Structure probing data (2A3) for a 207-nucleotide construct. Conditions: 150 mM KOAc, 10 mM MgCl2 and 150 mM bicine (pH 8.5), 24 C.
RNA sequence: GGGAACGACUCGAGUAGAGUCGAAAACCGGUAAUAUCGUUGACAUGUGCUGAUUUAUCUAUAGAAGCACCUUCGACCAUUAAAAAGAAUCCUUUUUUAUUAUGUUCUAAUUUACUAAGUGCACUUUGUUGAGAGGACUAAACUUUCGAGUUUAGUCGAACAUUGGAUUCUUCGGAAUCCAAUGUUCAAAAGAAACAACAACAACAAC
Reactivity to 2A3 in 0.01 (KOAc 150mM, MgCl2 10mM, bicine 150mM(pH8.5), 24C), signal-to-noise 2, nucleotides 027 to 156: c010c000g050g010u140a070a040u090a040u090c000g020u000u020g040a030c020a100u090g020u000g000c010u020g110a150u120u200u090a190u070c110u040a110u010a210g030a020a000g000c010a010c010c020u010u000c000g010a000c020c020a020u000u120a000a090a040a000a000g060a040a090u080c050c020u060u230u030u110u060u090a120u120u030a060u230g000u070u070c000u010a110a110u090u200u140a140c050u020a010a150g070u070g100c020a030c110u080u020u020g000u020u000g060a130g000a030g160g000a040c000u000a010a010a010c030u020u130u170c200g000a010g060u000u000u000a010g000u000c020